[RMDB]
RNA sequence: GGGAACGACUCGAGUAGAGUCGAAAAGUGGACGCCUGUCUCGGUGACCGGCACGGGGAAGAACGUGUCGUUCACGUACACGCUUCCCGAUCUCGGAGCGGAUGGGCUCAAGCAGAUAGAGAUGCGGCUCUAGAACGGAGUUCGCUCCGUUCUAGAGAAAAGAAACAACAACAACAAC
Reactivity to 2A3 in 0.01 (KOAc 150mM, MgCl2 10mM, bicine 150mM(pH8.5), 24C), signal-to-noise 3, nucleotides 027 to 126: g080u060g030g050a030c050g020c020c030u040g050u080c040u050c140g120g050u060g030a140c000c000g010g000c040a010c050g010g000g040g050a070a080g030a280a040c000g000u010g000u010c010g000u050u080c040a040c040g010u050a010c030a010c030g020c010u030u000c020c000c010g050a130u050c060u040c030g020g010a020g020c010g020g050a070u050g070g040g000c040u020c050a050a030g000c030a000g050a190u220a030g060a030g010a030u060g090c010g050g020
Reactivity to DMS in 0.01 (KOAc 150mM, MgCl2 10mM, bicine 150mM(pH8.5), 24C), signal-to-noise 4, nucleotides 027 to 126: g010u010g020g020a120c190g010c010c030u000g000u000c030u000c040g030g030u010g000a090c020c010g000g020c170a030c060g000g000g010g020a060a080g010a080a110c030g010u000g000u000c020g020u010u010c130a090c060g000u000a020c040a050c040g010c030u010u000c000c010c020g010a060u010c040u010c010g010g000a300g030c020g010g000a080u010g000g000g020c020u000c070a070a130g000c070a040g010a150u000a120g000a050g010a070u000g020c070g010g000